[RMDB]
RNA sequence: GGGAACGACUCGAGUAGAGUCGAAAAAGUACCAGGUCCCCCUCUAAGGGACUUGUCCCCCUCUAAGGGACUUGCGUCGGUCCUAUCCUAGGCCGAAUAGGUGAAUAAAUACUUACGGACGGCCUUGGUCUGUCCUAGAGGUUAUCAACAUAUGAACGAAUUGAACAAAGUUCGCUUUGUUCAAUUCAAAAGAAACAACAACAACAAC
Reactivity to DMS in 0.01 (KOAc 150mM, MgCl2 10mM, bicine 150mM(pH8.5), 24C), signal-to-noise 2, nucleotides 027 to 156: a120g000u000a070c130c000a070g010g000u000c020c000c010c020c130u000c210u010a080a030g030g020g000a010c000u010u010g010u010c020c050c010c050c030u010c090u000a080a090g010g000g000a070c010u000u010g000c090g070u000c030g000g020u000c000c010u040a060u000c060c050u000a050g030g000c000c050g000a180a090u010a020g000g010u000g020a150a150u000a110a120a150u010a050c010u010u000a090c120g020g060a180c060g040g030c000c020u000u030g010g000u000c030u000g040u000c020c030u000a130g000a040g010g000u000u010a080u000c060a050a110c050a090u000a110u000g010a120a150c130
Reactivity to 2A3 in 0.01 (KOAc 150mM, MgCl2 10mM, bicine 150mM(pH8.5), 24C), signal-to-noise 2, nucleotides 027 to 156: a010g120u100a060c110c000a000g000g000u000c000c000c000c010c000u160c010u120a040a020g000g000g000a000c000u010u020g020u030c000c000c000c000c000u010c010u020a030a070g000g000g010a020c000u030u130g100c110g030u010c070g010g090u000c000c040u030a040u060c010c000u000a000g020g000c010c000g030a070a080u040a030g000g030u030g080a040a030u120a130a070a010u160a070c020u040u020a070c080g110g030a000c010g010g010c000c000u010u000g050g000u040c060u030g040u000c010c000u010a010g000a000g000g030u040u060a080u090c030a010a100c000a040u220a080u300g060a030a010c100